An RNA of 207 nucleotides, treated with 2A3 and DMS and read out base by base.
In probing experiments dimethyl sulfate is read out at A N1 and C N3, which are open when not base-paired.
For DMS the reverse transcriptase was MarathonRT.
RNA sequence: GGGAACGACUCGAGUAGAGUCGAAAAAGGGACAAGUCGCAAAUGUUUCGACAUUUCUCGCGGGAGCUGUAGUCGUGGAGCCAUCGGGUUAAGCGGUUAUCAGUCACGAGGCUGAGAAUUAGGAUAGAGGAUGGUUGUGAUUUAACAAGGCCGGAAGGGCACUUAUGAGUUUCGACUCAUAAGUGCCAAAAGAAACAACAACAACAAC
Reactivity to 2A3 in 0.01 (KOAc 150mM, MgCl2 10mM, bicine 150mM(pH8.5), 24C), signal-to-noise 2, nucleotides 027 to 156: a000g030g010g020a020c040a070a140g000u050c040g050c090a010a090a070u090g040u030u100u040c070g020a000c020a040u050u130u020c070u020c040g040c010g030g040g020a070g010c000u030g020u020a000g020u030c030g000u020g010g020a010g020c030c010a170u210c120g020g040g000u070u070a050a010g010c000g040g000u040u030a070u170c050a000g060u040c000a010c160g020a030g000g040c070u070g000a020g000a040a070u120u070a030g010g000a020u060a080g070a010g020g050a040u020g070g000u040u080g030u000g030a100u020u050u110a080a050c030a050a020g060g020c000c020g080g000a050a020g030
Reactivity to DMS in 0.01 (KOAc 150mM, MgCl2 10mM, bicine 150mM(pH8.5), 24C), signal-to-noise 1, nucleotides 027 to 156: a060g080g000g020a080c040a050a220g020u020c000g000c050a070a050a110u000g010u000u010u010c070g030a120c050a060u010u010u000c020u010c080g000c010g070g000g030a140g020c000u020g030u000a110g020u000c010g000u010g010g000a180g010c030c030a130u020c110g010g010g000u000u000a060a140g020c060g020g020u000u000a080u000c010a000g000u020c040a080c220g000a160g010g000c060u000g020a080g000a040a080u000u000a060g020g010a100u010a070g010a220g000g020a070u010g000g000u010u010g040u000g010a130u000u020u010a020a110c040a000a070g010g040c020c000g020g010a100a110g020
Background: 2A3 adducts were read by reverse transcription with SuperScript II with manganese. Source: RMDB library OK3TST, as collected in RNAgym. Reactivities are given for positions 27 through 156.